[RMDB]
Structure probing data (DMS and 2A3) for a 177-nucleotide construct.

RNA sequence: GGGAACGACUCGAGUAGAGUCGAAAACUCAGUUCGCUGAGAAAAAAGAUAUGGAGAAAGUUGUCUCCUUCGGAAACGAAGGAAGAUUUCGAACUUCUCCUAAGUCAAAAACCGUGUUCGCACGGAAUCGCUAUAAAUGGUUCGCCAUUUAUAGCGAAAAAGAAACAACAACAACAAC
Reactivity to DMS in 0.01 (KOAc 150mM, MgCl2 10mM, bicine 150mM(pH8.5), 24C), signal-to-noise 2, nucleotides 027 to 126: c000u000c000a030g020u000u020c220g030c030u000g040a010g010a000a040a090a200a130a100g000a040u000a300u000g000g000a000g030a060a100a050g000u000u000g010u000c010u010c000c000u000u000c000g000g000a110a050a140c000g000a000a000g000g010a020a020g000a020u020u010u010c170g000a020a030c040u000u000c000u000c000c000u010a010a120g000u000c010a060a070a060a090a130c000c000g020u000g000u000u030c170g020c000a010c010g000g000a050a050
Reactivity to 2A3 in 0.01 (KOAc 150mM, MgCl2 10mM, bicine 150mM(pH8.5), 24C), signal-to-noise 2, nucleotides 027 to 126: c000u000c000a000g020u080u060c180g000c100u030g020a000g030a080a210a000a000a010a040g050a020u090a030u150g010g000a000g010a040a130a070g050u040u010g010u050c000u000c020c000u000u000c040g040g010a050a090a080c000g010a000a000g010g020a080a060g010a020u060u080u100c100g040a060a020c020u010u020c000u000c000c000u020a140a020g090u050c050a040a020a000a210a180c010c030g010u000g010u000u070c300g060c060a000c000g020g090a070a080

Background
Values cover nucleotides 27 to 126. The DMS profile rests on 1,436 reads. Source: RMDB library TTRDEL, as collected in RNAgym.